RNA sequence: GGGAACGACUCGAGUAGAGUCGAAAAGGAUCACGAGGGGGAGACCCCGGCAUCCUGGGACGGACACCCAAGGGGCUCACACCGGAGACGGUGGAUCCGGCCCGAGAGGGCAACGAAGGUCCGAACAACCAUUAAAUCGUUUCGACGAUUUAAUGGUAAAAGAAACAACAACAACAAC
Reactivity to DMS in 0.01 (KOAc 150mM, MgCl2 10mM, bicine 150mM(pH8.5), 24C), signal-to-noise 7, nucleotides 027 to 126: g010g010a000u000c030a140c140g040a150g010g000g020g000g010a220g000a270c000c000c000c000g000g010c110a020u000c000c000u000g000g000g000a120c030g000g010a060c050a150c000c000c000a090a130g000g000g010g010c050u000c070a230c010a050c000c010g000g000a270g010a220c000g010g010u010g000g000a030u000c070c230g010g000c010c010c000g000a140g000a300g010g000g010c090a060a080c160g000a120a130g030g000u000c010c000g010a190a080c180a100
Reactivity to 2A3 in 0.01 (KOAc 150mM, MgCl2 10mM, bicine 150mM(pH8.5), 24C), signal-to-noise 3, nucleotides 027 to 126: g000g000a010u030c020a000c160g060a240g030g000g000g020g010a070g040a060c010c010c000c030g010g000c020a020u020c000c020u010g010g000g010a020c020g010g000a010c020a200c090c000c000a050a060g040g000g010g000c020u040c030a120c000a010c010c010g020g000a040g020a030c010g020g000u020g010g000a040u000c020c000g040g000c000c000c020g000a010g020a010g000g020g020c050a070a000c050g050a080a010g070g010u000c010c000g020a030a020c040a030
Conditions: 150 mM KOAc, 10 mM MgCl2 and 150 mM bicine (pH 8.5), 24 C. An RNA of 177 nucleotides, treated with DMS and 2A3 and read out base by base. The 2A3 profile rests on 5,937 reads. For DMS the reverse transcriptase was MarathonRT. Values cover nucleotides 27 to 126. Source: RMDB library OK2TRN, as collected in RNAgym. High 2A3 reactivity points to a flexible backbone, as in loops and unpaired stretches.